[RMDB]
Chemical mapping of a 177-nucleotide RNA with DMS and 2A3. For DMS the reverse transcriptase was MarathonRT. 2A3 adducts were read by reverse transcription with SuperScript II with manganese. For DMS, 3,444 sequencing reads were counted.

RNA sequence: GGGAACGACUCGAGUAGAGUCGAAAAUGGGCAGGUGCCAGUGGGUAAAAAAAGUUUGAUCACAGAAUUAUGUCAAUCACCACAUGUUUAGUCAGUUGUCUAGGCUUGGGGGGAAAACUGACGUGCACUUAUGUAACCUCUUCGGAGGUUACAUAAGAAAAGAAACAACAACAACAAC
Reactivity to DMS in 0.01 (KOAc 150mM, MgCl2 10mM, bicine 150mM(pH8.5), 24C), signal-to-noise 3, nucleotides 027 to 126: u010g010g010g030c060a080g030g010u000g000c030c060a050g010u000g010g010g010u000a010a000a070a110a070a080a070g010u000u000u000g010a070u000c130a080c110a110g010a100a100u010u010a060u010g010u010c030a020a050u010c050a090c040c030a060c060a060u000g020u000u010u010a080g010u010c020a090g000u000u000g010u010c030u000a090g010g000c090u010u010g010g000g000g010g000g000a030a010a030a040c060u000g010a020c030g020u010g020c180a100
Reactivity to 2A3 in 0.01 (KOAc 150mM, MgCl2 10mM, bicine 150mM(pH8.5), 24C), signal-to-noise 2, nucleotides 027 to 126: u060g010g010g020c080a070g050g050u020g040c030c000a010g010u060g060g000g050u160a080a100a000a000a000a000a070g020u050u080u080g060a060u090c020a010c020a150g260a210a120u190u140a070u220g050u030c020a020a050u060c010a020c000c030a020c010a040u120g010u060u060u010a000g000u020c070a030g000u070u060g070u090c030u060a010g000g040c050u050u080g100g000g030g000g000g000a000a060a060a000c030u010g020a000c030g020u020g020c020a020